[RMDB]
RNA sequence: GGGAACGACUCGAGUAGAGUCGAAAAGAUAUGGAAGACUCACUAUGCCAGUCGGUUUCGGAAACGAAACGCGACGGUAAUUUAGUGGUCUUCCUAAGUCAAAGCCGCAUCGCUUCGGCGAUGCGGCGAGUAGCUGAUGGUUCGCCAUCAGCUACUCAAAAGAAACAACAACAACAAC
Reactivity to 2A3 in 0.01 (KOAc 150mM, MgCl2 10mM, bicine 150mM(pH8.5), 24C), signal-to-noise 1, nucleotides 027 to 126: g040a050u090a060u120g000g040a020a020g000a000c080u010c300a020c000u000a060u120g030c030c030a130g060u000c040g000g000u000u010u020c000g000g040a060a120a070c010g000a040a030a040c300g060c010g300a020c000g000g000u110a130a160u070u220u020a000g000u010g000g000u000c000u010u000c000c000u000a030a000g030u040c010a070a030a300g000c070c040g000c000a030u000c040g030c150u170u220c300g170g000c000g090a040u060g060c170g000g010c000